An RNA of 207 nucleotides, treated with 2A3 and read out base by base. The reactions ran in a buffer of 150 mM KOAc, 10 mM MgCl2 and 150 mM bicine (pH 8.5), at 24 C. For 2A3, 657 sequencing reads were counted.

[RMDB]
RNA sequence: GGGAACGACUCGAGUAGAGUCGAAAAGUACAGAAUUCGUUCUGUACAUCUGUUUUCCGGUGGUCUGGUCCCGGACCACCGUUACUCCAUUCAGCUUCUUCGGAACCUGUUCGGAGGAAUUAAACGGGCACCCUCUGAACGCAGUUCGCUGCGUUAAAUUUCAAAGGGCAUUCGUGCCCUUUGAAAUAAAAGAAACAACAACAACAAC
Reactivity to 2A3 in 0.01 (KOAc 150mM, MgCl2 10mM, bicine 150mM(pH8.5), 24C), signal-to-noise 1, nucleotides 027 to 156: g000u000a000c000a000g020a040a010u060u170c120g090u090u050c030u020g000u000a000c000a040u040c070u100g100u080u020u050u020c020c020g000g000u000g010g000u000c000u000g050g160u300c000c010c030g060g000a000c000c000a000c000c000g000u000u070a000c000u000c000c000a030u120u010c000a000g020c020u020u000c000u020u140c130g150g000a030a040c010c000u020g080u190u040c070g000g010a000g000g000a020a020u160u180a060a020a010c070g000g000g000c000a000c000c020c010u120c080u120g060a020a000c000g020c000a000g010u070u090c130g020c070u010g000c000g000u010u020a060a170